This 177-nucleotide RNA was probed chemically with DMS and 2A3. For DMS, 832 sequencing reads were counted.

RNA sequence: GGGAACGACUCGAGUAGAGUCGAAAAGUGCGCACGUUCGCGUGCGCACAAAGAAUGCUGGAACGCCCAGCACGGAACGAACCGAACAGCGUUAAAAUAAAAAAAUCCGAGCGUUCGCGCUCGGAAACUAGUUGAUAAUCUUCGGAUUAUCAACUAGAAAAGAAACAACAACAACAAC
Reactivity to DMS in 0.01 (KOAc 150mM, MgCl2 10mM, bicine 150mM(pH8.5), 24C), signal-to-noise 1, nucleotides 027 to 126: g020u000g040c000g000c000a000c010g020u000u030c270g040c030g090u000g010c070g040c000a000c000a000a060a060g010a090a050u000g010c020u000g000g000a100a110c160g020c060c000c010a090g000c020a060c120g000g020a070a100c110g030a070a190c010c020g000a100a090c070a110g000c030g010u000u000a060a100a080a090u020a030a030a040a110a120a070a050u000c010c000g020a030g000c020g020u010u010c240g020c010g040c000u000c010g020g010a010a000a070
Reactivity to 2A3 in 0.01 (KOAc 150mM, MgCl2 10mM, bicine 150mM(pH8.5), 24C), signal-to-noise 1, nucleotides 027 to 126: g010u010g000c000g000c030a000c030g020u060u060c170g000c000g050u010g000c050g020c010a010c020a010a010a000g000a060a050u020g000c020u030g000g000a270a030c070g080c060c000c000a000g010c020a010c000g000g020a100a010c000g000a080a040c000c020g010a050a020c040a070g020c000g030u040u060a080a050a090a140u200a070a130a080a030a000a020a010u040c020c000g020a020g020c000g000u030u050c270g030c020g000c130u000c000g000g020a000a000a000
Record summary: It was measured as part of the RMDB library M2PK50. The 2A3 profile rests on 1,138 reads.